Chemical mapping of a 177-nucleotide RNA with 2A3 and DMS. The reactions ran in a buffer of 150 mM KOAc, 10 mM MgCl2 and 150 mM bicine (pH 8.5), at 24 C. Values are in units of 0.01, from 0 to 300, in steps of 10. Reactivities are given for positions 27 through 126.
RNA sequence: GGGAACGACUCGAGUAGAGUCGAAAAGCUUUUGCGUCUGCUCGCGGGCCCUUGGCGGCCGGUGGGUACGCUGGGUGAAUAUGGUUGCCUUUCUGCCUUCCAUUCCCGUUGUCGAGGACCUACGCGCAAACCUUACACUCUUCGGAGUGUAAGGUUUAAAAGAAACAACAACAACAAC
Reactivity to 2A3 in 0.01 (KOAc 150mM, MgCl2 10mM, bicine 150mM(pH8.5), 24C), signal-to-noise 2, nucleotides 027 to 126: g000c020u040u160u300u100g010c010g060u050c090u140g010c000u020c030g070c060g060g000g000c000c020c030u070u170g120g000c090g000g000c050c000g150g010u070g020g040g010u050a030c080g010c030u010g010g040g070u070g090a060a030u170a140u290g110g020u000u100g080c030c000u000u220u100c050u040g000c010c010u030u060c040c000a050u040u120c070c010c000g010u060u140g100u080c040g010a020g000g020a020c000c040u040a020c070g050c000g000c060
Reactivity to DMS in 0.01 (KOAc 150mM, MgCl2 10mM, bicine 150mM(pH8.5), 24C), signal-to-noise 3, nucleotides 027 to 126: g020c030u000u000u000u000g010c020g010u000c150u010g020c010u000c020g010c030g010g010g030c000c010c020u000u000g030g020c120g020g010c020c010g000g060u000g010g010g010u000a020c040g000c020u010g010g020g020u000g000a080a090u000a070u010g000g010u000u010g010c030c090u010u010u000c090u000g000c090c030u000u010c020c040a170u000u000c010c020c020g020u000u000g010u000c030g010a140g010g020a090c040c050u000a040c090g010c110g010c160